[RMDB]
RNA sequence: GGGAACGACUCGAGUAGAGUCGAAAAAGGUUUUCUCUCCGGCAUGACAAAAUCGUCCGAGGUCCAAAGGCACGUCUUUUUCGGGUAAGCAUCGCGCGGCGCAAUAUACAUAGGGAACCAGGGAUGUGAGUCAUUCUCAGGAAGGUAGCCGCCAUACUCGUUCAUAUUAGUUCGCUAAUAUGAACGAAAAAGAAACAACAACAACAAC
Reactivity to 2A3 in 0.01 (KOAc 150mM, MgCl2 10mM, bicine 150mM(pH8.5), 24C), signal-to-noise 2, nucleotides 027 to 156: a010g110g000u080u050u030u030c030u000c000u000c020c000g000g000c010a010u020g010a010c010a010a140a070a050u210c020g000u000c020c010g050a070g000g020u010c010c000a040a050a040g090g000c070a020c100g090u090c010u000u150u030u090u100c070g040g040g020u100a120a010g040c020a090u110c080g020c010g000c050g100g000c070g020c040a030a030u140a000u040a200c070a070u230a120g060g000g010a050a070c000c000a040g020g040g050a010u000g020u020g010a000g000u010c000a010u050u030c060u000c030a040g020g020a030a010g030g010u010a000g000c010c010g020c000c020a020u100a110c040
Reactivity to DMS in 0.01 (KOAc 150mM, MgCl2 10mM, bicine 150mM(pH8.5), 24C), signal-to-noise 1, nucleotides 027 to 156: a050g030g030u000u000u000u000c000u020c030u000c000c010g020g000c080a060u000g010a090c000a010a170a090a300u030c010g050u000c030c000g000a300g030g020u000c030c020a060a050a080g000g000c030a010c090g000u000c030u010u000u000u000u000c030g070g010g000u000a060a130g040c060a070u000c070g050c060g030c020g030g000c040g040c010a080a170u000a130u000a040c050a140u010a190g020g030g000a030a030c000c000a100g020g000g020a080u000g000u000g000a110g030u000c000a040u000u000c030u000c030a160g020g030a070a060g010g030u000a040g030c050c030g000c020c010a050u000a070c140
This 207-nucleotide RNA was probed chemically with 2A3 and DMS. 2A3 adducts were read by reverse transcription with SuperScript II with manganese. The data come from the RNA Mapping Database (RMDB), library OK3TST. For 2A3, 1,688 sequencing reads were counted. The reactions ran in a buffer of 150 mM KOAc, 10 mM MgCl2 and 150 mM bicine (pH 8.5), at 24 C.